Conditions: 150 mM KOAc, 10 mM MgCl2 and 150 mM bicine (pH 8.5), 24 C.
The record gives the reactivity of an RNA of 177 nucleotides to DMS and 2A3.
DMS adducts were read by reverse transcription with MarathonRT.
RNA sequence: GGGAACGACUCGAGUAGAGUCGAAAAGGCCAGGCCGUGGCCAGAGCAGAUACGUAGGCCCAUGAAAUUGAUGAACUGAGAGUUGCUUCCAGUCCUGAGCGCACCAUCUGGAAUUCCAGUCUGAGGUCCUCAUUUGUUGAUUCGUCAACAAAUGAGGAAAAGAAACAACAACAACAAC
Reactivity to DMS in 0.01 (KOAc 150mM, MgCl2 10mM, bicine 150mM(pH8.5), 24C), signal-to-noise 2, nucleotides 027 to 126: g020g000c000c010a050g000g010c110c070g020u010g040g000c060c030a040g010a080g050c040a080g000a090u010a060c040g010u010a070g000g000c010c000c040a070u040g000a010a090a080u010u000g010a080u000g000a080a120c060u010g040a180g020a050g010u000u000g020c060u020u000c070c000a070g000u010c010c000u030g000a120g000c020g010c040a060c040c010a060u000c040u020g000g000a090a120u020u020c030c020a050g050u020c060u010g020a090g000g000u020
Reactivity to 2A3 in 0.01 (KOAc 150mM, MgCl2 10mM, bicine 150mM(pH8.5), 24C), signal-to-noise 6, nucleotides 027 to 126: g020g000c000c010a020g030g080c030c020g120u080g030g000c020c010a010g010a000g030c030a010g020a070u080a120c050g020u040a040g040g000c010c020c000a030u110g070a110a110a090u210u180g030a070u060g040a090a040c020u010g020a010g020a000g220u070u090g020c020u060u000c000c000a020g020u010c010c000u080g010a020g010c050g010c020a020c010c000a020u040c000u020g030g030a050a020u150u060c010c020a020g030u000c040u090g070a060g060g070u030